RNA sequence: GGGAACGACUCGAGUAGAGUCGAAAAUAAAGGUGAUCCUGGAAAUGCCACAAGUCCAGAUGACCUAAGCAAUCCAAAGACUUUUUUGGCAUUUGUGGGCAUCCUGGAAAACGAACAUGCGAUACGCAUGCCGCACCCAAUUCGUUGGGUGCGGCAUAAAAGAAACAACAACAACAAC
Reactivity to DMS in 0.01 (KOAc 150mM, MgCl2 10mM, bicine 150mM(pH8.5), 24C), signal-to-noise 1, nucleotides 027 to 126: u020a150a170a000g000g000u000g010a140u000c000c040u000g000g010a110a010a070u000g010c010c060a020c300a000a050g060u000c000c010a140g000a060u000g110a080c020c030u000a160a170g000c300a140a040u000c020c040a090a290a010g010a030c050u000u020u000u000u000u000g000g000c050a060u000u000u000g000u000g020g000g090c050a060u000c050c050u000g010g010a060a000a130a100c120g000a120a170c130a000u000g020c020g030a170u000a080c090g000c050
An RNA of 177 nucleotides, treated with DMS and read out base by base. It was measured as part of the RMDB library OK2TST. The reactions ran in a buffer of 150 mM KOAc, 10 mM MgCl2 and 150 mM bicine (pH 8.5), at 24 C.